Structure probing data (2A3) for a 207-nucleotide construct. It was measured as part of the RMDB library OK3TST. The RNA was probed in 150 mM KOAc, 10 mM MgCl2 and 150 mM bicine (pH 8.5) at 24 C.
RNA sequence: GGGAACGACUCGAGUAGAGUCGAAAAGCUAGUCGGAGACGACUAGCAACGAUCAGUUCGCUGAUCGGAAGGUGCAUUCAAAUACGCUAGAAGCACCAAUAAGCGACGCCUAGCGUAAAACUGAGAAAGCAGAUAACAAAAAUAAAAAGGCGUCGUGGUCAGUAGCAGUGUUCGCACUGCUACUGACAAAAGAAACAACAACAACAAC
Reactivity to 2A3 in 0.01 (KOAc 150mM, MgCl2 10mM, bicine 150mM(pH8.5), 24C), signal-to-noise 1, nucleotides 027 to 156: g010c000u000a000g000u020c020g010g000a050g000a220c010g000a000c000u000a000g000c000a010a010c020g000a000u010c020a000g050u090u090c230g010c110u030g000a020u020c020g000g050a070a050g000g020u000g020c060a300u090u000c010a000a060a060u100a020c000g020c050u030a000g000a000a010g060c000a000c000c000a000a040u220a100a040g000c010g000a000c000g000c010c010u030a030g000c000g020u020a010a020a100a100c020u120g010a050g150a180a110a060g150c030a000g060a040u220a140a050c120a090a130a100a040a000u270a020a020a000a020a000g000g030c000g010u000c000g000u020g080